[RMDB]
RNA sequence: GGGAACGACUCGAGUAGAGUCGAAAAGAUAUGGAUGUCGUAUUUCCGCAGAUACUUCCGACAGAUUGUAUGUCGGAAACGACAUACAAUCUGUCGGAAGAGUAGGAGGAUACGAGCAUCCUAAGUCCCUAAUCUAGUAGUUCGCUACUAGAUUAGGAAAAGAAACAACAACAACAAC
Reactivity to DMS in 0.01 (KOAc 150mM, MgCl2 10mM, bicine 150mM(pH8.5), 24C), signal-to-noise 3, nucleotides 027 to 126: g010a120u010a280u010g010g000a030u000g020u010c000g020u000a010u000u000u000c000c000g020c200a220g010a050u000a030c010u000u000c000c000g040a030c010a010g010a060u000u000g010u000a010u000g010u000c000g030g000a030a030a110c010g030a040c010a000u000a010c020a020a020u000c010u010g000u000c000g000g000a000a000g010a030g010u010a040g000g000a050g010g010a010u000a000c010g010a120g020c010a010u000c000c000u000a050a140g010u000c060
Reactivity to 2A3 in 0.01 (KOAc 150mM, MgCl2 10mM, bicine 150mM(pH8.5), 24C), signal-to-noise 2, nucleotides 027 to 126: g060a070u200a070u300g010g000a000u010g000u070c000g010u010a000u000u060u010c010c010g050c140a010g020a100u040a060c020u010u000c020c000g000a010c010a030g000a000u030u030g010u020a020u010g010u040c010g010g030a030a010a000c020g010a010c020a020u060a000c000a000a000u000c000u000g010u020c000g000g000a000a000g000a000g010u020a010g000g020a020g020g030a010u010a000c000g020a080g140c000a000u000c000c000u000a130a020g070u060c000